[RMDB]
RNA sequence: GGGAACGACUCGAGUAGAGUCGAAAAGAUAUGGAAUACUAUGAAGUAAAUAACGAAGAACGCUUUCGGAAACGAAAGCGGGAGUUGAUUAUGGAGUAUUCCUAAGUCAAACUGCAGUUCGCUGCAGGACUAAUACAGCCUUCGGGCUGUAUUAGUCAAAAGAAACAACAACAACAAC
Reactivity to DMS in 0.01 (KOAc 150mM, MgCl2 10mM, bicine 150mM(pH8.5), 24C), signal-to-noise 3, nucleotides 027 to 126: g000a050u010a300u000g000g000a020a000u010a010c010u000a220u040g010a190a300g000u010a050a040a100u010a030a020c020g000a110a120g040a130a240c010g000c000u000u000u010c010g010g000a100a090a150c010g000a000a010a010g010c020g000g000g000a060g030u010u000g000a070u000u010a030u000g020g030a010g000u000a010u000u000c000c000u000a050a180g020u000c050a080a150a300c020u000g000c010a010g010u000u010c270g040c010u000g000c000a000g000
Reactivity to 2A3 in 0.01 (KOAc 150mM, MgCl2 10mM, bicine 150mM(pH8.5), 24C), signal-to-noise 2, nucleotides 027 to 126: g000a010u060a030u160g010g010a000a020u010a010c010u030a130u300g040a120a060g070u150a130a090a300u170a020a120c050g140a300a030g000a040a020c010g000c020u020u000u000c010g000g050a080a050a050c000g030a000a010a000g020c060g030g000g010a030g000u060u140g150a230u070u110a080u120g130g090a030g000u000a000u000u000c000c000u010a080a020g010u010c040a040a140a100c030u040g000c000a030g010u060u100c210g120c170u010g000c020a000g020